[RMDB]
RNA sequence: GGGAACGACUCGAGUAGAGUCGAAAAGCAAAGAGUACUGGGAUGGUGGGUGUGUUUGUCGUCACAGGUCCAGAAUGAGAAUACUAACAACGAAUAGAUUAUGUCCUGGCACACUUCCUUCGUGGCAUGUGUCAAUUCGUCGCGCGGUACCAGCCCCAUACUGCAAUAUGUUCGCAUAUUGCAGUAUAAAAGAAACAACAACAACAAC
Reactivity to 2A3 in 0.01 (KOAc 150mM, MgCl2 10mM, bicine 150mM(pH8.5), 24C), signal-to-noise 7, nucleotides 027 to 156: g080c070a090a090a020g060a040g030u070a050c070u080g010g020g060a080u080g030g100u050g030g010g010u020g010u010g030u030u050u090g070u050c070g030u060c050a030c020a080g010g010u010c050c010a030g080a070a080u100g040a060g050a110a060u080a180c040u090a120a060c090a060a020c080g080a070a040u070a100g070a050u080u090a040u230g060u050c010c020u010g020g010c020a010c000a000c030u080u080c010c010u050u110c110g040u100g020g000c030a020u060g050u020g020u080c030a030a110u070u070c030g010u010c020g010c010g000c020g060g010u020a050c000c020a010g030c000c010c000c010
Reactivity to DMS in 0.01 (KOAc 150mM, MgCl2 10mM, bicine 150mM(pH8.5), 24C), signal-to-noise 5, nucleotides 027 to 156: g000c060a070a090a150g000a200g010u000a070c030u000g020g030g010a070u010g020g040u010g010g010g010u000g030u000g030u000u000u000g040u000c030g000u020c040a070c090a080g030g010u010c020c010a120g010a070a100u000g000a110g010a100a100u000a080c070u010a100a110c030a040a060c030g010a040a060u000a080g000a100u000u000a090u000g010u010c040c100u000g020g000c040a030c030a040c050u000u000c020c030u010u010c180g030u000g010g000c300a070u000g020u010g010u000c030a070a130u000u000c030g010u010c000g010c060g020c070g010g010u000a020c020c020a090g010c000c010c000c120
Overview: Chemical mapping of a 207-nucleotide RNA with 2A3 and DMS. For DMS, 13,499 sequencing reads were counted. For DMS the reverse transcriptase was MarathonRT. The RNA was probed in 150 mM KOAc, 10 mM MgCl2 and 150 mM bicine (pH 8.5) at 24 C.